Annotation
The record gives the reactivity of an RNA of 177 nucleotides to 2A3 and DMS. The reactions ran in a buffer of 150 mM KOAc, 10 mM MgCl2 and 150 mM bicine (pH 8.5), at 24 C. 2A3 adducts were read by reverse transcription with SuperScript II with manganese.

[RMDB]
RNA sequence: GGGAACGACUCGAGUAGAGUCGAAAAUAUUGGUACGGUAAUAUGUAUGUCGCCUGAAUCAAUGUAGUGCGAUUUCUAUCAUACGAGUUUAAAUGAAGCUAUCUCGGCUCCGUGGGGAGGCAACUACUAGACGUACUUAGUUCGCUAAGUACGUCUAAAAAGAAACAACAACAACAAC
Reactivity to 2A3 in 0.01 (KOAc 150mM, MgCl2 10mM, bicine 150mM(pH8.5), 24C), signal-to-noise 6, nucleotides 027 to 126: u180a020u020u040g040g000u050a050c030g010g050u060a070a050u080a130u250g190u090a130u090g120u090c080g000c010c010u020g100a030a030u080c080a060a080u090g090u130a050g040u050g190c000g010a000u050u160u000c010u010a050u060c020a060u050a140c040g010a060g040u030u150u100a060a140a110u170g060a050a010g010c020u050a060u150c030u010c040g070g000c000u010c010c010g050u110g000g030g020g000a020g010g010c010a040a020c020u090a020c000
Reactivity to DMS in 0.01 (KOAc 150mM, MgCl2 10mM, bicine 150mM(pH8.5), 24C), signal-to-noise 4, nucleotides 027 to 126: u020a050u010u000g010g010u010a070c050g000g010u010a030a080u030a080u020g030u040a050u040g020u000c060g000c000c010u040g020a070a040u010c080a070a060u000g000u020a050g010u010g000c020g000a070u000u010u010c030u000a030u010c050a080u020a160c060g010a040g000u010u010u030a010a080a070u020g000a080a070g020c060u000a070u000c040u000c030g000g000c020u000c020c040g050u030g010g000g010g010a040g010g010c070a020a070c090u000a070c120